[RMDB]
RNA sequence: GGGAACGACUCGAGUAGAGUCGAAAAGAUUUGGGCAAACACCCGAUCAGGUAGUCGUGCGCACUACCAAUCGAGUUGUGCCUACAAGCGGGCGGUGAACCAUGGCAAAGCCCGAAGAUCAUAAGCCCGUACAUUGCCUGUUCGCAGGCAAUGUACGAAAAGAAACAACAACAACAAC
Reactivity to 2A3 in 0.01 (KOAc 150mM, MgCl2 10mM, bicine 150mM(pH8.5), 24C), signal-to-noise 2, nucleotides 027 to 126: g010a010u080u120u150g000g000g000c020a130a120a030c020a070c030c020c030g000a010u020c060a080g010g000u010a000g010u020c120g090u190g280c140g000c030a010c000u000a010c010c000a000a030u020c000g010a030g040u050u040g090u080g040c000c000u000a030c030a060a000g110c000g000g020g000c000g010g000u090g100a120a140c050c050a130u060g120g000c010a120a010a070g000c000c020c040g000a020a010g020a010u070c030a020u030a300a000g040c010c050
Reactivity to DMS in 0.01 (KOAc 150mM, MgCl2 10mM, bicine 150mM(pH8.5), 24C), signal-to-noise 2, nucleotides 027 to 126: g000a050u020u020u000g000g010g000c000a100a170a050c110a080c010c010c000g020a000u000c090a150g020g000u000a000g020u000c060g000u010g030c280g010c200a070c000u000a000c010c010a160a010u000c000g020a010g000u000u000g000u010g010c010c000u000a070c290a030a100g010c030g030g000g010c010g020g010u000g000a050a120c110c070a100u000g010g010c010a090a150a210g000c000c020c020g000a040a070g000a060u000c020a080u000a070a150g020c040c030